Structure probing data (2A3 and DMS) for a 177-nucleotide construct. It was measured as part of the RMDB library OK2TRN.
[RMDB]
RNA sequence: GGGAACGACUCGAGUAGAGUCGAAAAUUGUGACACCACUGUUUAGCACUGUGACAUCACAGUAGAGCAUGUGACAACAAAGUGGAACAUGGUGACACCACAGUGCAGCACUGUGUCUGUAGAUUGACGGUGCCUACCGGUUCGCCGGUAGGCACCGAAAAGAAACAACAACAACAAC
Reactivity to 2A3 in 0.01 (KOAc 150mM, MgCl2 10mM, bicine 150mM(pH8.5), 24C), signal-to-noise 2, nucleotides 027 to 126: u060u150g120u110g000a010c000a010c000c000a020c050u030g050u000u080u150a030g000c010a000c030u010g010u000g050a080c040a030u030c020a030c070a170g140u220a100g070a030g060c020a010u000g000u000g050a000c000a150a010c050a230a240a010g160u060g010g020a040a000c010a010u040g180g000u000g000a010c010a000c020c020a030c000a000g000u030g070c020a020g000c000a020c030u020g030u000g010u010c040u030g110u060a030g000a130u040u110g060a030
Reactivity to DMS in 0.01 (KOAc 150mM, MgCl2 10mM, bicine 150mM(pH8.5), 24C), signal-to-noise 1, nucleotides 027 to 126: u000u000g060u020g030a070c000a020c090c000a070c180u000g050u000u060u000a110g000c000a020c000u030g030u000g000a050c210a290u000c080a000c020a210g000u000a100g000a190g010c060a060u000g010u000g040a160c010a120a050c160a060a060a120g030u000g000g020a180a010c000a040u010g080g000u000g000a070c090a170c110c030a000c010a040g010u000g000c000a100g000c030a020c100u000g020u000g050u000c010u000g060u000a050g000a100u010u000g010a140

2A3 is a SHAPE reagent: it acylates the 2'-hydroxyl of flexible nucleotides of all four kinds. DMS adducts were read by reverse transcription with MarathonRT. 2A3 adducts were read by reverse transcription with SuperScript II with manganese.